[RMDB]
RNA sequence: GGGAACGACUCGAGUAGAGUCGAAAAGGUGGUGGAUGCCAUGGACCAGCUAGCAUGCUCGGACGGCUACACCCAUGUUCAGAAGGCCGAAACCGUGGGAAGCGAAAACCUGGUAAGAGUGUUUCUCAUCAAUCUGUCUCACCACCCACCGCAAGAAGAUUUGAUCAUGCUUCGGCAUGAUCAAAUCAAAAGAAACAACAACAACAAC
Reactivity to 2A3 in 0.01 (KOAc 150mM, MgCl2 10mM, bicine 150mM(pH8.5), 24C), signal-to-noise 1, nucleotides 027 to 156: g000g000u010g010g000u010g000g080a070u050g000c010c000a010u090g000g000a070c010c000a030g000c050u040a000g000c010a110u230g000c020u050c060g010g010a140c000g090g000c020u060a000c000a080c070c000c000a010u080g090u010u050c050a120g000a090a090g170g030c030c010g020a170a000a010c000c000g000u000g050g020g020a040a000g010c010g010a060a000a040a230c080c010u090g080g070u300a150a000g120a020g140u130g070u010u040u020c010u010c000a080u170c070a170a000u000c050u010g030u000c020u010c150a000c000c000a000c050c020c000a040c000c000g090c070a040a010g140a120a010
Chemical mapping of a 207-nucleotide RNA with 2A3. For 2A3 the reverse transcriptase was SuperScript II with manganese. The reactions ran in a buffer of 150 mM KOAc, 10 mM MgCl2 and 150 mM bicine (pH 8.5), at 24 C.